The data come from the RNA Mapping Database (RMDB), library RNAMAK. An RNA of 207 nucleotides, treated with 2A3 and read out base by base. For 2A3, 693 sequencing reads were counted. Values cover nucleotides 27 to 156. The RNA was probed in 150 mM KOAc, 10 mM MgCl2 and 150 mM bicine (pH 8.5) at 24 C.
RNA sequence: GGGAACGACUCGAGUAGAGUCGAAAAGCCUGAUUCGUCAGGCAUUUAUGGGGUCUAAACUCCUUGGAUUUACUUUUGACGAGCUGAAGCCUCCACGGCUCGAUAAGUUGUCAGGAGCUUAGACGGAGGCACCCGAUCUCAGUGCUUCGGCACUGAACGAGUAAACGUCGUUCGCGACGUUUACUCGAAAAGAAACAACAACAACAAC
Reactivity to 2A3 in 0.01 (KOAc 150mM, MgCl2 10mM, bicine 150mM(pH8.5), 24C), signal-to-noise 1, nucleotides 027 to 156: g010c000c020u040g020a030u000u100c100g060u000c080a000g010g000c010a000u010u030u030a180u120g150g030g000g000u010c000u020a000a020a000c000u000c060c000u020u170g150g020a130u090u300u200a070c010u000u050u030u150g300a200c060g000a000g000c000u000g010a120a000g020c000c020u060c030c000a070c010g000g000c000u020c000g000a010u020a040a070g190u300u280g280u300c000a030g000g000a020g000c010u000u010a010g000a000c030g000g000a000g000g050c000a040c000c020c010g140a170u040c000u010c110a040g000u000g010c000u030u170c210g060g000c020a000c020u000g010a020a030